[RMDB]
RNA sequence: GGGAACGACUCGAGUAGAGUCGAAAAUAUGGCAUGUGCACAGAAAAGUUCUCGUUCGCGAAAAAUCCGGCGGACACUGGUCACGGAACAGUUGUCAUUGAACUUUCCUACUCUGGGAGUGAUGGCCCAGAUAGGGGCUAUUCGUAGCCCCUAUCUGAAAAGAAACAACAACAACAAC
Reactivity to DMS in 0.01 (KOAc 150mM, MgCl2 10mM, bicine 150mM(pH8.5), 24C), signal-to-noise 6, nucleotides 027 to 126: u010a040u010g020g010c030a050u010g020u000g010c060a060c050a060g010a080a090a080a110g000u000u000c030u010c060g010u000u010c030g020c050g010a020a100a120a120a130u010c090c100g020g000c040g010g000a030c030a060c050u010g000g010u000c030a080c120g010g000a070a060c110a060g000u010u000g020u000c050a070u010u000g000a070a060c110u000u000u010c030c010u000a070c120u000c050u000g010g010g010a080g010u000g010a100u010g010g000c030c060
Reactivity to 2A3 in 0.01 (KOAc 150mM, MgCl2 10mM, bicine 150mM(pH8.5), 24C), signal-to-noise 4, nucleotides 027 to 126: u150a040u040g020g000c020a010u090g030u080g080c050a020c030a080g110a050a120a030a020g000u070u030c070u010c020g040u140u140c040g010c030g110a120a110a010a060a100u090c040c040g080g000c040g050g000a020c040a020c040u040g020g020u070c050a030c100g050g040a110a020c020a050g080u140u060g030u080c020a040u020u100g040a050a020c020u050u040u020c010c010u030a070c030u040c040u110g080g040g000a050g040u030g040a070u090g050g010c010c010